[RMDB]
RNA sequence: GGGAACGACUCGAGUAGAGUCGAAAACUUGCUGAGUAGCUGCGAGACCCGUUGGAAGCUGACGCCGACGACCUCGCCAAUGUCGCGCAAGUCGAGGCCGGCCUCGCGGAGUUUGCGGGCGGUGUCCCUCGACUCGGUGAUCACGCGCUGUUCGAGCGAAGUACGUCCUAUUCGUAGGACGUACUUCAAAAGAAACAACAACAACAAC
Reactivity to 2A3 in 0.01 (KOAc 150mM, MgCl2 10mM, bicine 150mM(pH8.5), 24C), signal-to-noise 3, nucleotides 027 to 156: c020u040u060g000c000u020g030a040g090u150a020g050c120u110g000c000g010a020g010a090c000c040c020g020u010u060g020g070a170a060g020c100u060g010a030c040g020c030c000g010a030c020g040a030c020c010u050c070g060c020c020a090a050u130g050u140c020g000c020g000c120a050a000g000u010c010g050a000g020g030c050c010g150g090c030c080u210c020g000c010g070g110a190g100u070u240u250g020c010g000g000g000c020g000g080u090g030u080c050c000c000u000c010g020a010c010u000c000g000g020u030g040a100u040c040a030c110g020c000g000c070u020g020u050u030c030g020a020g020c070
Annotation: Source: RMDB library OK3TST, as collected in RNAgym. Chemical mapping of a 207-nucleotide RNA with 2A3. For 2A3 the reverse transcriptase was SuperScript II with manganese. For 2A3, 1,630 sequencing reads were counted. Values cover nucleotides 27 to 156. Conditions: 150 mM KOAc, 10 mM MgCl2 and 150 mM bicine (pH 8.5), 24 C.